[RMDB]
Structure probing data (DMS and 2A3) for a 207-nucleotide construct. The RNA was probed in 150 mM KOAc, 10 mM MgCl2 and 150 mM bicine (pH 8.5) at 24 C. The 2A3 profile rests on 1,867 reads. The data come from the RNA Mapping Database (RMDB), library OK3TST. 2A3 is a SHAPE reagent: it acylates the 2'-hydroxyl of flexible nucleotides of all four kinds.
RNA sequence: GGGAACGACUCGAGUAGAGUCGAAAACAGGCGGGCCUGCUCGCGGAAAGUGUUAAUCUGGCUGUCGACGUGCACCAGCUCCUCGUAGUCUCGCUGGUUGCGCGCCAUGGCGUAUUGUACGAAUUGCGGGAUGCGGGAGCGAAAGGGGGAUCCGAGCCGUACUUAGAGCAUUCGUGCUCUAAGUACGAAAAGAAACAACAACAACAAC
Reactivity to DMS in 0.01 (KOAc 150mM, MgCl2 10mM, bicine 150mM(pH8.5), 24C), signal-to-noise 1, nucleotides 027 to 156: c000a110g050g020c060g020g000g030c000c030u010g030c010u000c000g020c100g030g020a080a090a070g020u000g060u000u010a060a070u010c050u010g020g000c020u000g000u000c040g040a060c030g050u020g000c010a040c010c000a100g000c020u000c000c010u030c050g090u000a050g050u000c010u000c070g030c020u000g000g000u000u010g010c000g010c030g000c010c180a140u020g050g000c040g020u010a040u000u010g000u000a110c060g020a090a240u010u010g000c010g000g000g000a030u000g000c020g010g040g010a070g000c010g010a020a010a130g030g000g000g040g000a100u010c030c040g030a080g000c080
Reactivity to 2A3 in 0.01 (KOAc 150mM, MgCl2 10mM, bicine 150mM(pH8.5), 24C), signal-to-noise 3, nucleotides 027 to 156: c030a000g070g000c000g010g030g080c000c060u050g000c010u050c040g030c040g020g010a090a100a020g100u070g040u110u170a110a090u040c040u060g040g020c020u020g070u120c040g020a070c010g050u100g000c010a020c040c020a020g000c020u050c000c010u200c040g090u090a100g230u030c030u030c030g020c010u020g070g000u060u040g010c020g000c000g000c040c000a170u170g080g010c000g000u030a050u080u300g030u020a050c030g060a120a070u110u110g010c020g000g000g000a010u010g010c030g010g000g000a000g000c020g040a030a010a030g020g000g000g000g020a020u020c070c030g040a010g050c020